[RMDB]
RNA sequence: GGGAACGACUCGAGUAGAGUCGAAAAUGAACGGGAUUUGCUUCUUGAGCGUACACACUCUGGUAUUGCACGAGCUAAAGCAUCAGGAAAACGUUUUGGCCGUCCAUCAGCGCUGAGCGAAGAUCAAGUGGCAUAUAAGGUUCGCCUUAUAUGCCACAAAAGAAACAACAACAACAAC
Reactivity to 2A3 in 0.01 (KOAc 150mM, MgCl2 10mM, bicine 150mM(pH8.5), 24C), signal-to-noise 2, nucleotides 027 to 126: u140g010a030a030c050g000g000g070a080u060u050u120g030c030u050u060c020u090u110g040a030g010c030g050u100a030c090a000c000a020c090u090c040u070g070g050u090a090u040u170g030c030a000c050g050a070g000c020u060a090a030a000g000c020a030u100c070a070g180g070a070a090a000a020c050g000u000u000u100u000g030g000c010c000g000u020c020c020a040u030c010a020g030c000g010c010u020g020a040g040c020g040a030a020g010a060u100c040a140a030
Reactivity to DMS in 0.01 (KOAc 150mM, MgCl2 10mM, bicine 150mM(pH8.5), 24C), signal-to-noise 3, nucleotides 027 to 126: u020g000a070a100c110g000g000g010a150u000u000u000g020c050u010u000c060u010u000g010a120g050c060g040u000a040c100a080c110a080c130u000c100u000g010g010u010a020u000u000g010c080a090c030g010a120g000c260u010a050a050a050g030c020a080u000c120a100g000g000a040a050a080a070c060g010u000u010u000u010g010g010c030c040g000u010c080c070a070u000c080a070g000c040g020c100u000g000a100g000c040g010a080a070g020a090u000c070a090a130
Chemical mapping of a 177-nucleotide RNA with 2A3 and DMS. In probing experiments dimethyl sulfate is read out at A N1 and C N3, which are open when not base-paired. Values cover nucleotides 27 to 126. The reactions ran in a buffer of 150 mM KOAc, 10 mM MgCl2 and 150 mM bicine (pH 8.5), at 24 C. It was measured as part of the RMDB library OK2TRN.